[RMDB]
RNA sequence: GGGAACGACUCGAGUAGAGUCGAAAAACGAGUACAAACGGAAUGUUCAAGAAAUCUGUGGAUUCUUAGAUGCCCGUCUGCCGGAGGUGGAAGUCCGAUAUGCCCGGAAAGAUUAAAUCAGAUGACUGGCGGAACCUCCCAAUUGAUAAAUGGAACGCUUAUACUGCGUAUUCGUACGCAGUAUAAGAAAAGAAACAACAACAACAAC
Reactivity to 2A3 in 0.01 (KOAc 150mM, MgCl2 10mM, bicine 150mM(pH8.5), 24C), signal-to-noise 2, nucleotides 027 to 156: a000c070g020a050g100u160a050c050a040a130a060c070g040g080a120a060u110g030u120u070c020a040a050g010a060a170a040u030c050u080g070u190g100g020a060u000u060c010u050u160a080g020a130u130g040c030c000c000g020u010c020u020g030c040c050g000g010a040g020g030u040g030g050a100a020g050u050c050c000g000a020u010a090u150g080c040c040c000g000g000a120a100a030g050a010u080u220a060a100a110u070c060a060g030a050u060g020a110c020u030g020g030c000g050g060a070a060c010c000u040c000c040c020a040a100u090u180g050a040u120a090a060a040u040g060g030a090a000c070g020
Reactivity to DMS in 0.01 (KOAc 150mM, MgCl2 10mM, bicine 150mM(pH8.5), 24C), signal-to-noise 1, nucleotides 027 to 156: a180c030g010a140g040u020a030c000a040a050a070c080g020g010a080a050u010g000u020u010c050a030a090g010a060a090a080u010c040u000g030u030g010g020a110u010u000c010u010u000a080g030a090u000g020c070c020c040g060u010c020u010g020c010c020g020g020a060g000g010u000g000g000a130a150g020u000c010c030g000a090u000a130u000g000c000c020c050g010g030a130a100a100g020a140u010u010a020a110a160u010c020a110g000a150u010g010a220c020u000g010g010c020g010g000a070a040c040c030u000c000c020c000a060a180u010u020g000a120u000a040a080a110u010g010g010a070a120c080g000
An RNA of 207 nucleotides, treated with 2A3 and DMS and read out base by base. The DMS profile rests on 2,171 reads. The reactions ran in a buffer of 150 mM KOAc, 10 mM MgCl2 and 150 mM bicine (pH 8.5), at 24 C. Reactivities are rounded to 0.1 and cut off at 0 and 3.